The record gives the reactivity of an RNA of 177 nucleotides to 2A3 and DMS.
RNA sequence: GGGAACGACUCGAGUAGAGUCGAAAAGGUUCCCGGGCUUACCUACGGGAACUGCUGGUUUCCCCUUAUGUCCAGUCCCUCUCCCGUCCUGGUGAAGGGAGAUUCCGGAACGUUUAGCAUUUGAGGGCACUUGUUAGAUGUUCGCAUCUAACAAGUGAAAAGAAACAACAACAACAAC
Reactivity to 2A3 in 0.01 (KOAc 150mM, MgCl2 10mM, bicine 150mM(pH8.5), 24C), signal-to-noise 4, nucleotides 027 to 126: g040g000u000u000c010c000c000g000g010g000c070u120u120a060c010c020u030a060c020g000g010g000a010a010c020u020g010c020u020g050g000u000u030u050c000c000c000c000u010u050a030u060g050u010c010c000a010g010u000c000c000c000u000c000u020c000c000c000g030u040c030c020u170g230g010u250g070a030a030g010g060g000a000g000a000u140u010c050c030g100g060a110a070c040g100u100u130u190a040g000c030a050u080u050u110g060a050g000g000g000
Reactivity to DMS in 0.01 (KOAc 150mM, MgCl2 10mM, bicine 150mM(pH8.5), 24C), signal-to-noise 5, nucleotides 027 to 126: g010g000u000u000c000c000c000g010g000g010c090u000u020a060c300c140u030a060c020g000g000g000a020a010c010u000g000c080u000g010g010u000u000u000c060c010c010c080u000u000a030u000g010u000c030c110a100g000u000c010c010c020u000c010u000c000c000c000g010u000c020c030u010g010g020u010g010a040a040g000g000g000a010g000a050u000u000c090c040g000g010a050a090c120g010u010u000u010a120g010c050a060u000u010u000g010a070g010g000g000